Notes:
An RNA of 177 nucleotides, treated with DMS and 2A3 and read out base by base. For DMS, 15,415 sequencing reads were counted. Conditions: 150 mM KOAc, 10 mM MgCl2 and 150 mM bicine (pH 8.5), 24 C. Source: RMDB library OK2TRN, as collected in RNAgym.
RNA sequence: GGGAACGACUCGAGUAGAGUCGAAAAGGUGUGGGGUGGGGAGCUGCUUUGUGCUCAAAAGCUGUUUCUGUGUGUGUGUGUGUUUUGAUUUUUGUUUUUUUGAGACAGGGUCUCACUCGGUUGCCCACCAUUCAUAUGUAUUCGUACAUAUGAAUGGAAAAGAAACAACAACAACAAC
Reactivity to DMS in 0.01 (KOAc 150mM, MgCl2 10mM, bicine 150mM(pH8.5), 24C), signal-to-noise 4, nucleotides 027 to 126: g010g000u000g020u010g010g000g010g020u010g000g010g010g010a090g010c050u000g010c040u000u010u000g020u010g010c050u000c080a060a050a070a070g020c040u010g010u000u000u000c030u000g020u000g000u000g010u000g020u010g010u000g020u010g000u000u000u000u010g010a070u000u000u010u000u010g010u000u000u000u000u000u000u000g010a080g010a040c040a110g010g010g010u000c010u000c030a040c020u000c020g000g000u000u000g010c010c000c010a190
Reactivity to 2A3 in 0.01 (KOAc 150mM, MgCl2 10mM, bicine 150mM(pH8.5), 24C), signal-to-noise 3, nucleotides 027 to 126: g040g020u120g040u120g120g010g010g190u190g030g000g000g000a030g020c030u030g010c000u050u090u110g070u070g040c000u040c060a040a060a030a040g020c020u030g050u070u080u010c030u040g030u030g000u010g000u000g010u010g000u010g040u010g030u000u050u070u070g070a070u020u020u040u110u040g110u090u050u010u020u000u070u090g030a050g010a010c020a060g110g040g000u010c010u000c010a030c000u010c000g050g000u010u030g050c000c010c000a020